[RMDB]
RNA sequence: GGGAACGACUCGAGUAGAGUCGAAAAAAGUUGCACCAGGUACGGUUACCAGACGUUGCCAAACAGGGUGACAUGAGGAUCACCCAUGUACUGUCCCUUGGCAGCCGUACCUGGUGCUGGUGAAAAAUCUGGCAAAAUAAUUCGUUAUUUUGCCAGAAAAAGAAACAACAACAACAAC
Reactivity to 2A3 in 0.01 (KOAc 150mM, MgCl2 10mM, bicine 150mM(pH8.5), 24C), signal-to-noise 2, nucleotides 027 to 126: a000a010g270u160u030g000c000a000c000c000a010g000g010u000a000c000g030g000u030u020a000c030c000a000g020a030c070g090u110u080g070c030c020a060a150a030c030a100g000g020g000u010g000a000c030a110u280g190a170g180g070a070u010c030a100c010c000c000a000u020g030u030a060c060u080g060u060c000c020c040u030u040g000g020c010a000g000c000c000g010u000a000c000c000u000g000g000u000g000c000u010g000g000u080g030a050a010a010a000a030
Reactivity to DMS in 0.01 (KOAc 150mM, MgCl2 10mM, bicine 150mM(pH8.5), 24C), signal-to-noise 4, nucleotides 027 to 126: a090a080g010u000u010g020c000a010c000c000a010g000g000u000a010c000g000g010u000u000a030c030c020a060g020a060c110g020u010u000g020c110c070a030a090a050c040a050g000g010g010u000g010a010c030a160u010g010a140g020g010a210u000c020a020c000c000c000a030u010g020u000a070c160u010g000u000c030c090c060u010u000g000g010c010a030g010c000c000g010u000a000c000c000u010g000g010u000g000c010u000g000g000u020g010a040a080a060a070a120